[RMDB]
RNA sequence: GGGAACGACUCGAGUAGAGUCGAAAAGGGGUCAAGCACUUUUGACGACUUGAAAUGUGGACAUGCUCUGAAGCCUCCACGGAGCAACAGCCACAUCGUACGGUCGAUAAGUGCUUGACGGAGGCACCCAAAAGAAGUUCCCUUCGGGGAACUUCAAGGCUAUGCUUAGUUUCGACUAAGCAUAGCCAAAAGAAACAACAACAACAAC
Reactivity to 2A3 in 0.01 (KOAc 150mM, MgCl2 10mM, bicine 150mM(pH8.5), 24C), signal-to-noise 2, nucleotides 027 to 156: g040g000g020g040u020c020a000a000g050c010a010c000u000u110u270u300g300a220c080g000a000c030u130u210g140a110a180a080u130g030u020g000g020a000c030a100u200g000c090u000c000u000g030a110a010g000c000c000u000c000c020a030c010g030g000a000g030c010a080a060c040a080g130c000c000a000c000a010u010c050g080u200a100c210g000g030u010c010g040a030u050a130a000g000u000g030c000u000u000g000a000c010g000g000a000g000g000c000a030c000c000c000a060a150a050a000g040a010a000g030u030u010c000c000c000u000u020c170g010g000g000g020a000a010c000u000u000c010a000a020